[RMDB]
RNA sequence: GGGAACGACUCGAGUAGAGUCGAAAACGCCGCGGCUUUGCUGCUUUUACACCUCACACAGCAGCUCGUGUCACUGCCGGCCGGCGCGUGGUGAUAGAUGAAGCACCCUCGCUUCCGCCGCACCUACCCUAGGCAAUUAAUUCGUUAAUUGCCUAGGAAAAGAAACAACAACAACAAC
Reactivity to 2A3 in 0.01 (KOAc 150mM, MgCl2 10mM, bicine 150mM(pH8.5), 24C), signal-to-noise 6, nucleotides 027 to 126: c030g000c010c020g010c010g010g010c030u100u080u150g000c010u010g020c020u080u060u050u120a100c090a080c000c050u130c020a060c000a020c010a050g010c000a010g010c020u030c050g120u110g070u070c040a010c090u040g010c010c020g070g070c080c050g020g020c020g000c040g040u060g000g020u030g020a080u080a250g270a170u170g060a080a010g010c000a050c040c060c000u050c070g000c000u050u000c010c010g010c020c000g000c010a050c010c010u090a090c000
Reactivity to DMS in 0.01 (KOAc 150mM, MgCl2 10mM, bicine 150mM(pH8.5), 24C), signal-to-noise 6, nucleotides 027 to 126: c100g020c050c050g030c020g010g010c010u000u000u000g010c030u000g010c010u000u000u010u000a140c170a140c090c050u010c080a100c170a130c200a060g000c020a020g010c020u010c110g020u010g020u010c060a070c060u010g010c030c030g020g040c100c050g000g010c130g020c080g030u000g010g010u000g000a100u010a110g010a170u010g020a060a050g010c010a100c090c050c060u000c090g010c000u000u000c020c050g010c060c030g000c040a140c040c040u000a130c160